[RMDB]
RNA sequence: GGGAACGACUCGAGUAGAGUCGAAAAUGUGGUUCCUUCGGGAACCACACACUACCGAGAAUGAUCCUCGGUAUAUAAAUCAUACCCUUGGAAACAAGGGAACACUCCCUAGCUUCGGCUAGGGAAACAUGAUACGUCAGUUCGCUGACGUAUCAUGAAAAGAAACAACAACAACAAC
Reactivity to DMS in 0.01 (KOAc 150mM, MgCl2 10mM, bicine 150mM(pH8.5), 24C), signal-to-noise 4, nucleotides 027 to 126: u010g030u000g000g010u000u000c000c000u010u020c130g060g010g010a010a010c000c000a000c000a010c140a120c080u010a020c000c000g000a020g010a150a130u010g000a190u000c070c000u000c000g000g000u000a010u000a020u030a040a060a050u000c120a130u010a130c010c000c000u000u010g000g000a190a110a210c000a010a010g010g010g010a090a020c210a100c140u010c000c000c000u000a000g000c010u010u010c180g020g010c000u000a000g000g000g000a000a000a060
Reactivity to 2A3 in 0.01 (KOAc 150mM, MgCl2 10mM, bicine 150mM(pH8.5), 24C), signal-to-noise 1, nucleotides 027 to 126: u080g000u000g000g020u010u000c010c010u020u030c230g030g000g000a000a000c000c000a000c000a000c000a000c000u030a010c000c020g020a010g060a090a270u290g060a090u060c020c000u000c000g000g000u000a010u000a000u000a030a040a000u060c040a040u150a300c000c000c000u000u000g000g010a030a050a040c010a000a000g010g000g010a000a000c010a020c020u020c000c000c010u000a000g000c000u030u030c270g080g000c000u000a000g000g000g000a000a000a000